[RMDB]
RNA sequence: GGGAACGACUCGAGUAGAGUCGAAAAAGACUGCUACGGCAGUCAUGUCCCUUCAGCCAGUCCUGUGCCUGCCGCCUUUGUGCUGUCCUUGGAGGGAGGCAGAAGCAGGAUGACAAUGAGGGCAAAAAAUUUCUUUAUAGUUCGCUAUAAAGAAAUUAAAAGAAACAACAACAACAAC
Reactivity to 2A3 in 0.01 (KOAc 150mM, MgCl2 10mM, bicine 150mM(pH8.5), 24C), signal-to-noise 9, nucleotides 027 to 126: a000g000a010c000u010g000c000u020a040c200g130g000c010a000g000u000c000a000u040g030u060c010c000c000u030u110c060a020g000c020c010a030g040u010c000c010u020g010u060g060c010c000u010g000c000c000g040c010c010u090u080u080g130u150g060c080u080g080u160c040c030u070u160g110g010a010g000g010g010a060g010g000c000a000g000a030a010g000c000a000g000g010a000u000g010a010c030a010a080u150g020a090g020g020g000c070a030a020a000a030
Reactivity to DMS in 0.01 (KOAc 150mM, MgCl2 10mM, bicine 150mM(pH8.5), 24C), signal-to-noise 9, nucleotides 027 to 126: a100g000a020c000u000g000c000u010a090c190g030g010c000a010g000u000c010a020u010g000u020c010c000c010u010u020c140a140g010c040c030a210g010u010c000c000u000g000u000g000c300c000u000g010c000c000g010c000c000u000u000u000g000u040g010c040u010g000u000c040c050u020u010g000g000a050g000g000g000a090g010g010c000a010g010a090a300g010c010a010g010g000a040u010g010a070c140a130a160u010g000a060g000g010g010c050a000a030a060a070

This 177-nucleotide RNA was probed chemically with 2A3 and DMS. The reactions ran in a buffer of 150 mM KOAc, 10 mM MgCl2 and 150 mM bicine (pH 8.5), at 24 C.